[RMDB]
RNA sequence: GGGAACGACUCGAGUAGAGUCGAAAAAAUAUUUGCCUGCAAAAGACAUCUAAUCAGAUAUUGAAGCCAAAGCUGAUUUCAUACACUUUACCCGUAGUCGGUCAAAGUGGUACCUGUAUCACAGACCAGAUUUCGGUAUUUUCGAAUACCGAAAUCUAAAAGAAACAACAACAACAAC
Reactivity to 2A3 in 0.01 (KOAc 150mM, MgCl2 10mM, bicine 150mM(pH8.5), 24C), signal-to-noise 6, nucleotides 027 to 126: a000a000u190a070u030u060u050g040c000c010u020g030c040a020a050a080a150g080a070c050a040u040c040u150a110a040u110c050a040g070a070u070a080u120u160g070a100a020g030c040c030a100a030a020g030c050u000g030a070u020u020u050c130a110u130a130c000a010c040u030u030u040a040c000c020c010g090u130a050g070u120c060g020g010u030c050a110a030a090g010u020g000g000u010a060c020c040u080g050u060a030u070c010a000c010a040g060a030c010c040
Reactivity to DMS in 0.01 (KOAc 150mM, MgCl2 10mM, bicine 150mM(pH8.5), 24C), signal-to-noise 2, nucleotides 027 to 126: a090a040u000a040u030u000u000g000c110c050u000g030c070a030a040a140a120g020a050c060a050u010c060u010a090a120u050c100a030g010a070u000a060u010u010g000a100a090g000c050c030a090a070a060g020c010u000g000a140u000u000u010c110a040u010a080c150a020c010u000u000u010a030c010c000c010g010u040a030g020u040c000g010g010u010c080a040a080a100g010u010g000g020u000a010c030c120u020g020u000a010u010c060a020c010a070g000a100c130c070
Notes:
An RNA of 177 nucleotides, treated with 2A3 and DMS and read out base by base. For DMS, 2,960 sequencing reads were counted. DMS adducts were read by reverse transcription with MarathonRT. Source: RMDB library OK1LIB, as collected in RNAgym. Reactivities are given for positions 27 through 126. The RNA was probed in 150 mM KOAc, 10 mM MgCl2 and 150 mM bicine (pH 8.5) at 24 C.